[RMDB]
Chemical mapping of a 177-nucleotide RNA with DMS and 2A3. The 2A3 profile rests on 1,110 reads. For 2A3 the reverse transcriptase was SuperScript II with manganese. The RNA was probed in 150 mM KOAc, 10 mM MgCl2 and 150 mM bicine (pH 8.5) at 24 C.
RNA sequence: GGGAACGACUCGAGUAGAGUCGAAAAUGUUUGCCCUUCGGGGCAAACAAUAGAUGCGUCACGAGCAAACGGCAAGCUCGGAAAAGGACGCAAUUGCCGAAAAUACCCUAUGUUUCGACAUAGGGAAUAUACGUUCAGGGUUCGCCCUGAACGUAUAAAAAGAAACAACAACAACAAC
Reactivity to DMS in 0.01 (KOAc 150mM, MgCl2 10mM, bicine 150mM(pH8.5), 24C), signal-to-noise 1, nucleotides 027 to 126: u000g000u020u000u000g020c000c000c000u000u010c210g020g040g010g000c010a000a010a000c010a000a070u000a090g000a170u000g000c000g000u000c000a140c000g020a010g010c000a010a050a200c100g000g000c010a190a120g000c000u000c000g000g000a010a070a110a230g040g010a000c010g030c000a050a020u000u000g030c000c000g000a280a040a060a080u010a120c010c010c010u030a000u000g000u000u000u010c240g000a030c000a000u000a020g000g000g000a000a000
Reactivity to 2A3 in 0.01 (KOAc 150mM, MgCl2 10mM, bicine 150mM(pH8.5), 24C), signal-to-noise 1, nucleotides 027 to 126: u020g010u000u020u000g040c000c000c000u020u000c210g030g000g020g000c000a000a000a020c000a010a020u110a000g080a070u220g000c010g000u000c030a040c200g030a010g000c000a100a110a110c030g040g010c010a030a000g000c020u030c050g000g000a160a200a020a030g220g040a010c020g000c020a000a040u090u060g000c000c000g050a050a010a020a070u160a080c010c000c010u020a020u010g010u020u140u090c160g030a010c010a000u000a020g000g010g010a000a000